[RMDB]
RNA sequence: GGGAACGACUCGAGUAGAGUCGAAAAGGGGUCUUAUCUCUAGCGUGUCCUCUUGGACCCCUGACCCUCGCAUGUACAUCAGUGCUGAAGCCUCCACGGCACGACGACGUACAUGCGAGGGUCAGGGCUAGAGGAUCGGGUAAGACGGAGGCACCCACUAACGGUGGGGGUUCGCCCCCACCGUUAGAAAAGAAACAACAACAACAAC
Reactivity to 2A3 in 0.01 (KOAc 150mM, MgCl2 10mM, bicine 150mM(pH8.5), 24C), signal-to-noise 2, nucleotides 027 to 156: g040g000g020g020u000c010u010u040a020u090c110u010c110u200a030g060c090g210u290g020u120c040c010u060c040u110u230g140g050a130c020c000c050c180u060g000a000c000c000c010u020c000g000c000a010u030g020u030a000c000a050u100c060a140g010u000g000c010u030g030a100a040g030c000c020u040c000c010a030c010g020g060c000a000c030g130a050c090g030a040c100g000u000a000c000a000u010g000c000g000a000g000g000g000u000c000a000g000g000g010c000u010a000g000a000g000g000a050u080c070g020g000g000u010a000a000g030a000c030g010g000a000g000g010c020a040c150c020c010a010
Source: RMDB library RNAMAK, as collected in RNAgym. An RNA of 207 nucleotides, treated with 2A3 and read out base by base. The RNA was probed in 150 mM KOAc, 10 mM MgCl2 and 150 mM bicine (pH 8.5) at 24 C.